[RMDB]
Structure probing data (DMS) for a 177-nucleotide construct.
Source: RMDB library TTRINS, as collected in RNAgym.
Conditions: 150 mM KOAc, 10 mM MgCl2 and 150 mM bicine (pH 8.5), 24 C.
Reactivities are rounded to 0.1 and cut off at 0 and 3.
RNA sequence: GGGAACGACUCGAGUAGAGUCGAAAAGAUAUGGAUAACGUGAUUAGUACUGGUUUGGGAGAACGGUAUCGGAAACGAUACGGUUCGAAGAACAAAUGCAACAGUACUAAUCACGUUAUCCUAAGUCGAAUUCCAGGAAGUUCGCUUCCUGGAAUUCAAAAGAAACAACAACAACAAC
Reactivity to DMS in 0.01 (KOAc 150mM, MgCl2 10mM, bicine 150mM(pH8.5), 24C), signal-to-noise 1, nucleotides 027 to 126: g070a060u020a300u000g000g030a010u000a040a020c000g020u000g010a000u000u000a030g010u000a000c010u030g000g000u000u000u030g000g010g070a300g000a000a040c020g010g010u000a000u010c000g000g010a170a150a170c030g000a030u000a000c000g010g000u000u000c000g000a210a240g000a040a140c000a060a060a030u010g060c300a040a300c040a010g090u010a000c000u000a000a000u000c000a030c000g000u000u000a000u000c000c000u000a060a040g020u010c040